An RNA of 177 nucleotides, treated with 2A3 and DMS and read out base by base. Conditions: 150 mM KOAc, 10 mM MgCl2 and 150 mM bicine (pH 8.5), 24 C. Reactivities are given for positions 27 through 126.
RNA sequence: GGGAACGACUCGAGUAGAGUCGAAAAUUGAAACAGCUUCCCAACAUAUUCAUCGCUUCUUAACACUCGAUCAGGCUGUAUUUCAGAUUCGAGAGUUCAAGCAGAAAGACGCCACUGACUCAAUUCAUAUUAGUGGAGUGUUCGCACUCCACUAAUAAAAAGAAACAACAACAACAAC
Reactivity to 2A3 in 0.01 (KOAc 150mM, MgCl2 10mM, bicine 150mM(pH8.5), 24C), signal-to-noise 2, nucleotides 027 to 126: u070u060g010a000a080a070c030a010g090c020u040u000c030c000c000a090a040c010a030u230a110u100u100c070a080u100c070g000c020u010u050c010u000u060a030a000c010a030c060u010c000g030a070u080c030a040g230g000c020u050g000u080a140u020u270u140c020a010g030a070u110u100c000g010a020g000a000g070u030u040c070a000a040g000c020a010g130a020a110a010g070a050c040g040c030c020a010c050u040g050a010c010u000c070a020a090u190u060c050a050
Reactivity to DMS in 0.01 (KOAc 150mM, MgCl2 10mM, bicine 150mM(pH8.5), 24C), signal-to-noise 2, nucleotides 027 to 126: u020u030g010a080a110a060c080a080g010c080u000u000c000c010c020a170a120c180a170u020a040u000u010c060a070u000c110g000c050u000u000c090u000u000a040a060c020a070c010u000c020g010a040u010c080a140g000g010c080u000g010u000a110u010u010u000c040a060g000a130u000u000c050g020a020g000a110g000u000u000c130a030a070g020c030a090g020a050a080a040g020a080c110g020c050c020a050c080u000g000a070c080u000c050a060a060u010u020c190a100